This 177-nucleotide RNA was probed chemically with DMS and 2A3. Source: RMDB library OK2TRN, as collected in RNAgym. 2A3 adducts were read by reverse transcription with SuperScript II with manganese. For DMS the reverse transcriptase was MarathonRT. For DMS, 726 sequencing reads were counted.
RNA sequence: GGGAACGACUCGAGUAGAGUCGAAAAGCGCUCUGAGCGGCUGCUGCACAAGGCGACUGACACGAUCGAGGAGCGGCGCGAGUGCAUGUCAUGCCUGGAGGAGGCCGUGCAUGUGUACAGGGACAUCAGGCUUUGGGACAUUCGUGUCCCAAAGCCUAAAAGAAACAACAACAACAAC
Reactivity to DMS in 0.01 (KOAc 150mM, MgCl2 10mM, bicine 150mM(pH8.5), 24C), signal-to-noise 1, nucleotides 027 to 126: g000c050g000c000u000c010u010g010a300g010c070g020g030c020u010g020c040u000g030c070a030c080a090a160g000g000c000g000a060c090u000g020a160c060a130c030g020a130u020c180g000a090g020g000a090g000c040g020g020c030g030c040g000a210g010u000g030c030a020u000g020u000c070a080u010g010c040c010u000g000g000a150g020g000a080g010g000c050c070g010u000g020c040a030u000g000u000g000u000a080c160a110g030g010g000a040c100a050u000c150
Reactivity to 2A3 in 0.01 (KOAc 150mM, MgCl2 10mM, bicine 150mM(pH8.5), 24C), signal-to-noise 1, nucleotides 027 to 126: g010c060g020c060u020c050u070g040a020g000c000g040g010c010u040g000c010u000g020c120a100c040a020a100g210g000c070g040a190c060u040g030a090c020a010c200g150a190u190c140g050a040g040g060a140g140c020g000g000c000g000c000g010a040g000u050g000c040a080u140g120u160c060a060u170g000c040c000u040g000g040a030g000g010a010g040g000c010c000g050u040g000c070a070u080g080u080g010u090a020c090a090g040g010g000a010c000a030u020c040